Chemical mapping of a 170-nucleotide RNA with DMS and 2A3. Source: RMDB library 15KLIB, as collected in RNAgym. 2A3 is a SHAPE reagent: it acylates the 2'-hydroxyl of flexible nucleotides of all four kinds. Reactivities are given for positions 27 through 129. The DMS profile rests on 10,030 reads. The reactions ran in a buffer of 150 mM KOAc, 10 mM MgCl2 and 150 mM bicine (pH 8.5), at 24 C. In probing experiments dimethyl sulfate is read out at A N1 and C N3, which are open when not base-paired.

RNA sequence: GGGAACGACUCGAGUAGAGUCGAAAAGGCCUCUUCCUAGGUCCGGAGUCUAUCUCCAUCUGGUCCGUUCGGGCCCUCUUCGCCGGGGGAGCCCCCUCUCCAUCCUUGUCUUUCUUUCCGAGAAUUCAAACUACUCGCUUCGGCGAGUAGAAAAGAAACAACAACAACAAC
Reactivity to DMS in 0.01 (KOAc 150mM, MgCl2 10mM, bicine 150mM(pH8.5), 24C), signal-to-noise 3, nucleotides 027 to 129: g030g040c020c000u010c070u040u000c030c020u030a000g030g010u040c050c090g050g000a070g020u000c130u050a250u070c050u030c000c060a140u060c060u030g000g000u000c070c120g110u030u040c130g010g050g060c030c040c060u000c040u030u010c090g060c120c050g010g030g010g000g000a100g020c040c000c010c080c000u040c010u040c030c030a120u040c080c030u000u000g050u030c060u000u000u000c030u000u000u000c060c010g030a000g050a150a160u000u000c070a060a050a190
Reactivity to 2A3 in 0.01 (KOAc 150mM, MgCl2 10mM, bicine 150mM(pH8.5), 24C), signal-to-noise 4, nucleotides 027 to 129: g050g010c000c010u020c010u060u020c000c020u050a040g030g030u010c050c030g010g000a030g020u010c040u190a180u050c030u000c040c030a050u010c070u070g000g030u000c010c030g080u070u150c050g000g020g000c000c000c000u020c050u100u110c050g050c050c020g000g000g000g000g000a040g000c000c000c000c030c000u030c000u000c000c000a070u050c000c000u110u100g070u030c000u000u040u010c000u020u020u010c010c050g020a040g060a100a070u120u110c050a080a050a000